RNA sequence: GGGAACGACUCGAGUAGAGUCGAAAAGCGCGGAAAUAAACGCGUGUCGAAGCCUGUUCUAGAAAGAAGUCGCUUUCAGAUCGUGUCGAUGAUUUGCGUACUCAUGUGACAUAGAACAGGCGAAGAAGGGUUAUGUAUACUUCGGUAUACAUAACCCAAAAGAAACAACAACAACAAC
Reactivity to DMS in 0.01 (KOAc 150mM, MgCl2 10mM, bicine 150mM(pH8.5), 24C), signal-to-noise 4, nucleotides 027 to 126: g000c000g000c030g000g000a080a110a150u010a060a060a080c020g010c010g030u010g000u020c060g000a190a300g010c010c000u000g030u000u000c010u000a020g000a110a110a120g000a080a090g020u010c040g000c010u000u020u010c040a040g000a130u000c070g030u020g000u050c090g030a090u010g010a010u040u010u020g010c020g040u040a020c010u000c070a140u010g000u040g000a150c110a170u000a030g000a010a000c000a010g010g010c000g000a010a140g010a070a130
Reactivity to 2A3 in 0.01 (KOAc 150mM, MgCl2 10mM, bicine 150mM(pH8.5), 24C), signal-to-noise 8, nucleotides 027 to 126: g020c010g000c010g040g110a170a170a080u300a060a150a060c010g010c000g000u020g040u040c080g050a080a000g000c000c000u000g000u000u000c010u000a040g090a070a200a020g090a090a010g020u020c000g020c020u030u050u030c040a080g040a300u040c030g110u090g150u270c100g030a050u040g010a020u020u000u210g020c010g020u100a020c000u020c010a040u150g070u110g130a030c030a090u050a000g000a000a000c000a000g010g000c000g000a000a010g010a040a050
This 177-nucleotide RNA was probed chemically with DMS and 2A3. The RNA was probed in 150 mM KOAc, 10 mM MgCl2 and 150 mM bicine (pH 8.5) at 24 C. For DMS the reverse transcriptase was MarathonRT. 2A3 adducts were read by reverse transcription with SuperScript II with manganese.